[RMDB]
RNA sequence: GGGAACGACUCGAGUAGAGUCGAAAAGAUAUGGAAGUUAGGCAAGCUUGCAACGCGACUACCCACCACGGAGGUCGGAAACGACCUCGCGUGAGGUCGUAUCAAGCUUGCCUAACUUCCUAAGUCAGUUUUCUUAUAGCUUCGGCUAUAAGAAAACAAAAGAAACAACAACAACAAC
Reactivity to DMS in 0.01 (KOAc 150mM, MgCl2 10mM, bicine 150mM(pH8.5), 24C), signal-to-noise 2, nucleotides 027 to 126: g000a060u010a300u000g000g000a020a050g000u000u000a000g000g000c000a000a020g000c000u010u030g020c300a050a070c300g000c020g010a000c020u000a080c080c090c070a300c200c000a010c030g000g000a050g020g040u000c000g000g000a100a110a140c000g020a010c000c000u000c000g000c050g000u010g020a030g010g000u010c000g070u000a080u010c030a000a010g000c000u000u000g000c000c000u000a000a000c000u000u000c000c000u000a000a030g020u010c020a180